[RMDB]
RNA sequence: GGGAACGACUCGAGUAGAGUCGAAAAGUCAAGGGGUCCGAAAGGUACUCCUGAUGUACCUUGGCACUGAGUAAAGUCUUGGGUACCUAGGGAAAGGUGAAGGAGCUAGACUCCUUACCAAGUACUUUCUCUUUAAUAUCUUCGGAUAUUAAAGAGAAAAAGAAACAACAACAACAAC
Reactivity to 2A3 in 0.01 (KOAc 150mM, MgCl2 10mM, bicine 150mM(pH8.5), 24C), signal-to-noise 3, nucleotides 027 to 126: g030u030c090a050a090g000g000g000g010u010c020c010g040a060a030a010g020g010u070a010c000u000c000c000u000g000a000u050g010u020a010c000c000u010u010g000g000c130a020c060u050g060a090g250u240a130a210a010g000u030c010u020u040g010g020g010u050a050c030c050u080a060g020g000g040a010a020a020g020g020u110g100a010a010g010g020a010g000c050u090a060g080a300c000u010c000c000u000u010a000c010c000a000a000g010u010a010c000u010u050
Reactivity to DMS in 0.01 (KOAc 150mM, MgCl2 10mM, bicine 150mM(pH8.5), 24C), signal-to-noise 4, nucleotides 027 to 126: g010u000c020a060a040g020g010g010g010u000c010c010g000a050a110a160g010g000u010a020c010u000c010c000u010g000a030u000g010u000a040c010c000u010u000g010g010c130a050c010u010g010a150g010u010a090a140a120g000u000c000u010u000g010g010g020u000a040c030c120u010a070g000g000g000a090a180a190g000g000u000g010a020a020g010g010a020g000c020u010a160g010a250c000u000c000c000u000u000a020c000c010a030a030g000u000a060c020u000u000